[RMDB]
RNA sequence: GGGAACGACUCGAGUAGAGUCGAAAAGGAAAAUUAACUUAUGCCUCGGUUUGAACGAAAAUGGUUAAACUUUAGGAGCAAACUGAAAGUACGUUGUUCCACCAUUGAGGCUAUAGGGUAUUAGGAUGACUUGUUACACGUUCGCGUGUAACAAGUCAAAAGAAACAACAACAACAAC
Reactivity to 2A3 in 0.01 (KOAc 150mM, MgCl2 10mM, bicine 150mM(pH8.5), 24C), signal-to-noise 1, nucleotides 027 to 126: g110g000a110a170a000a000u040u020a050a030c000u000u000a010u140g010c000c010u000c000g090g000u080u190u120g080a080a010c010g070a040a070a070a110u070g030g000u020u080a030a090a090c040u120u150u050a030g030g020a040g040c020a000a060a120c010u050g010a050a050a030g040u040a030c090g010u000u030g000u020u000c000c030a010c000c000a120u070u150g000a000g010g010c030u010a030u020a000g030g030g000u040a040u010u130a040g170g110a070u070